[RMDB]
RNA sequence: GGGAACGACUCGAGUAGAGUCGAAAAUCCAAACCGAAGCCUUCGGGCAAUGUGGUGUUCGGACUGACUUUCAUCGUUUGACCGUUCGUGUGAAGUCUCCUGAAACGGAGCGCGAUACAGGGUGACAUGUUCUCAUAUGCUUCGGCAUAUGAGAACAAAAAGAAACAACAACAACAAC
Reactivity to DMS in 0.01 (KOAc 150mM, MgCl2 10mM, bicine 150mM(pH8.5), 24C), signal-to-noise 4, nucleotides 027 to 126: u020c020c000a090a110a090c070c010g000a130a130g010c030c050u000u030c150g010g000g020c030a040a040u020g020u000g020g010u000g010u000u000c100g000g020a080c100u010g000a060c090u010u000u010c080a060u000c020g000u000u000u010g000a120c110c040g000u020u010c030g020u010g020u020g010a110a070g030u020c030u000c000c030u000g000a110a090a080c160g020g000a090g010c090g010c040g000a040u010a030c070a110g000g000g010u040g000a030c140a170
Reactivity to 2A3 in 0.01 (KOAc 150mM, MgCl2 10mM, bicine 150mM(pH8.5), 24C), signal-to-noise 4, nucleotides 027 to 126: u010c000c000a060a020a000c040c020g060a050a020g050c020c010u040u090c130g060g020g010c030a000a040u160g010u110g020g060u070g110u050u050c030g010g050a040c030u030g030a030c000u030u110u010c070a130u040c040g030u020u070u120g130a110c020c010g000u030u040c040g020u030g040u040g180a060a070g080u040c040u020c000c000u020g020a140a040a020c040g000g000a010g000c020g000c010g010a010u060a200c030a070g010g010g080u050g030a020c000a060
Notes: Source: RMDB libraries RFM100 and RFMREP, as collected in RNAgym. The record gives the reactivity of an RNA of 177 nucleotides to DMS and 2A3. For 2A3 the reverse transcriptase was SuperScript II with manganese. Conditions: 150 mM KOAc, 10 mM MgCl2 and 150 mM bicine (pH 8.5), 24 C.